[RMDB]
The record gives the reactivity of an RNA of 177 nucleotides to 2A3 and DMS.
RNA sequence: GGGAACGACUCGAGUAGAGUCGAAAAGAUAUGGAUGCAGUUUGUCAGCUUGGAGGUUGCGAUGAAAGACUUCGGAAACGAAGUCUGGAGCAACUGAGGAGCUUGGAUUUAACUGCAUCCUAAGUCACAAUUACAGAAGCUUCGGCUUCUGUAAUUGAAAAGAAACAACAACAACAAC
Reactivity to 2A3 in 0.01 (KOAc 150mM, MgCl2 10mM, bicine 150mM(pH8.5), 24C), signal-to-noise 1, nucleotides 027 to 126: g040a040u080a050u190g020g000a010u000g010c000a000g030u000u020u070g020u030c010a040g000c020u010u050g070g060a060g050g000u030u000g030c060g250a300u010g030a090a000a020g000a000c010u020u000c000g000g050a140a110a090c030g000a000a000g000u010c000u000g000g000a010g000c000a000a000c010u000g010a030g050g060a000g050c040u040u170g010g000a000u300u300u000a030a010c020u000g000c010a000u020c000c010u000a030a000g010u000c000a010
Reactivity to DMS in 0.01 (KOAc 150mM, MgCl2 10mM, bicine 150mM(pH8.5), 24C), signal-to-noise 2, nucleotides 027 to 126: g020a040u000a300u010g000g010a010u020g010c000a010g020u000u000u010g000u000c000a040g000c020u000u000g000g020a300g020g020u010u000g020c000g000a100u000g020a160a170a030g000a000c000u020u020c010g000g000a140a080a230c000g000a040a000g010u000c000u000g000g000a060g020c010a000a000c000u010g020a300g000g000a020g000c020u000u000g000g000a030u000u030u010a030a000c010u010g020c000a000u000c000c000u010a000a050g000u010c040a170
Values cover nucleotides 27 to 126. 2A3 adducts were read by reverse transcription with SuperScript II with manganese.